[RMDB]
RNA sequence: GGGAACGACUCGAGUAGAGUCGAAAAUUGGAUUAAAUAGCUGUUGCAACGUUUCGUUUAAUCGAUCAAUUCCUGCAUGACCGCGAUACAUCGGUGCGAGCACUUGAACGUCUUUUGCGCGAUAUCCAGUUGAAUGAAAGUUCGCUUUCAUUCAACUAAAAGAAACAACAACAACAAC
Reactivity to DMS in 0.01 (KOAc 150mM, MgCl2 10mM, bicine 150mM(pH8.5), 24C), signal-to-noise 7, nucleotides 027 to 126: u010u010g010g020a060u000u000a020a030a060u000a100g010c050u010g010u000u010g010c120a080a110c150g000u000u000u000c070g020u000u000u000a030a040u000c020g000a060u000c100a080a190u000u010c020c010u000g030c110a080u000g010a090c160c040g020c050g010a060u000a060c110a070u000c060g010g010u000g010c050g010a080g010c040a020c040u000u000g010a060a070c110g010u000c040u000u000u000u000g010c050g010c030g010a080u000a080u000c070c080
Reactivity to 2A3 in 0.01 (KOAc 150mM, MgCl2 10mM, bicine 150mM(pH8.5), 24C), signal-to-noise 4, nucleotides 027 to 126: u030u050g110g000a000u040u070a050a020a080u080a060g000c050u080g100u300u250g030c060a060a030c050g030u030u090u140c020g000u000u000u090a010a010u030c030g020a020u080c030a040a080u060u030c000c010u020g020c040a060u120g050a050c020c030g030c020g050a010u060a120c030a060u070c050g040g010u030g030c030g020a030g010c030a020c040u090u160g040a090a010c030g060u030c020u080u050u060u120g050c060g000c030g040a030u010a050u100c050c030
Source: RMDB library OK2TST, as collected in RNAgym. The record gives the reactivity of an RNA of 177 nucleotides to DMS and 2A3. DMS adducts were read by reverse transcription with MarathonRT. The reactions ran in a buffer of 150 mM KOAc, 10 mM MgCl2 and 150 mM bicine (pH 8.5), at 24 C. For 2A3, 4,731 sequencing reads were counted. Reactivities are given for positions 27 through 126.